[RMDB]
RNA sequence: GGGAACGACUCGAGUAGAGUCGAAAAGCUCUCCAGCAGGAGCUAGAGCGAAGACAUGUGACCAGCUGGAGCAUCACUUGUCGAUUAGCAGCUUGACGUGGAGCACCAGCAACGUCUUGCUGCGAAAGGGUAGGUUGUGGUUCGCCACGACCUACCCAAAAGAAACAACAACAACAAC
Reactivity to 2A3 in 0.01 (KOAc 150mM, MgCl2 10mM, bicine 150mM(pH8.5), 24C), signal-to-noise 6, nucleotides 027 to 126: g000c010u020c010u000c030c000a020g000c020a040g070g230a060g090c070u150a060g040a020g070c090g050a120a030g010a030c000a000u040g010u020g020a030c000c030a000g000c000u010g010g000a010g030c030a050u030c000a000c000u030u010g020u010c010g040a080u050u070a020g000c010a000g000c000u010u010g000a000c000g020u040g060g190a090g020c020a070c080c050a030g040c020a010a000c010g000u000c000u000u020g000c000u000g000c000g000a040a010a000
Reactivity to DMS in 0.01 (KOAc 150mM, MgCl2 10mM, bicine 150mM(pH8.5), 24C), signal-to-noise 4, nucleotides 027 to 126: g000c000u000c000u000c000c010a020g000c020a200g010g000a300g010c200u000a050g000a080g000c120g010a130a090g000a000c010a000u000g000u010g000a030c300c060a050g000c000u000g010g010a170g000c120a140u000c000a030c000u000u000g000u010c020g020a170u060u020a100g010c000a000g010c000u000u000g000a000c000g000u000g000g000a090g000c030a140c190c110a090g000c020a100a000c010g000u010c000u010u000g000c000u000g000c000g000a010a040a030